[RMDB]
RNA sequence: GGGAACGACUCGAGUAGAGUCGAAAAGACAAAGUGGAGUCUGGAUUCGUCCAGACUCCACUUUGUCAAAAUCAGUCAGUCAGUCUCAGUCAGUCAGUCUCAGUCAGUCAGUCAAAAGGGAGACUAUUUACUUACUUCGGUAAGUAAAUAGUCUCCCGAACUAUUUCCUGUUCGCAGGAAAUAGUUCAAAAGAAACAACAACAACAAC
Reactivity to DMS in 0.01 (KOAc 150mM, MgCl2 10mM, bicine 150mM(pH8.5), 24C), signal-to-noise 1, nucleotides 027 to 156: g020a020c000a020a020a000g020u000g000g010a060g030u010c000u010g020g030a060u000u000c300g010u010c000c000a000g010a000c010u000c010c000a000c020u000u000u000g000u000c010a000a030a080a080u020c030a090g010u010c060a110g030u000c040a120g020u000c020u010c030a110g010u000c070a110g030u000c040a050g010u000c040u000c030a140g000u000c010a050g000u000c030a100g000u000c060a020a040a070a140g030g010g030a020g020a010c000u020a000u000u000u000a030c020u000u000a010c000u000u020c300g090g040u010a010a030g020u000a000a000a000u000a000g010u000c010u010c010c000c000